[RMDB]
RNA sequence: GGGAACGACUCGAGUAGAGUCGAAAAGAUAUGGAUCCAUCGGAAUGAUGUAGGGAGAGAUGCGAAGAAUCGGAAACGAUUCUUCGCCGCUCUCGACGAUCUACAUAGGUACAUGGAUCCUAAGUCAUCUUGUAAUUCGCUUCGGCGAAUUACAAGAAAAAGAAACAACAACAACAAC
Reactivity to DMS in 0.01 (KOAc 150mM, MgCl2 10mM, bicine 150mM(pH8.5), 24C), signal-to-noise 1, nucleotides 027 to 126: g030a040u000a300u010g020g000a000u000c000c000a030u030c300g000g000a060a270u050g000a010u000g000u000a000g000g040g000a030g000a060g000a090u000g000c000g000a040a030g000a030a000u020c000g020g030a130a070a210c010g000a010u000u000c000u000u010c010g000c010c130g000c010u020c000u000c000g010a040c300g010a080u020c000u000a000c000a030u000a010g000g000u010a200c010a020u020g000g000a010u000c000c000u010a020a100g000u000c030a100
The record gives the reactivity of an RNA of 177 nucleotides to DMS. For DMS the reverse transcriptase was MarathonRT.